[RMDB]
RNA sequence: GGGAACGACUCGAGUAGAGUCGAAAAGAUGCGGUGGCGCUGGUGUCUCCCGACGGAUCCGUGCACGAUCCAGACCUCUUGCUGGUCGAGGCGCUGGAUGCGAUGGUGCUGACCGCCGGUGCGGACGGAGCCAGAUGCGAUUCGUCGCAUCUGGCUCAAAAGAAACAACAACAACAAC
Reactivity to 2A3 in 0.01 (KOAc 150mM, MgCl2 10mM, bicine 150mM(pH8.5), 24C), signal-to-noise 3, nucleotides 027 to 126: g080a030u120g020c040g050g120u130g030g020c050g000c070u100g020g080u150g010u010c000u000c010c020c000g000a010c010g030g010a060u010c000c020g010u030g000c030a000c000g000a020u060c020c000a000g040a100c010c030u060c030u100u210g070c090u120g120g000u080c030g000a090g060g020c110g020c100u050g010g000a000u100g060c000g040a080u090g080g000u110g040c020u010g070a100c000c060g010c000c000g000g010u020g020c080g010g000a020c040g040
Description:
An RNA of 177 nucleotides, treated with 2A3 and read out base by base. 2A3 adducts were read by reverse transcription with SuperScript II with manganese. Values cover nucleotides 27 to 126. The data come from the RNA Mapping Database (RMDB), library OK1LIB. The reactions ran in a buffer of 150 mM KOAc, 10 mM MgCl2 and 150 mM bicine (pH 8.5), at 24 C. For 2A3, 1,690 sequencing reads were counted.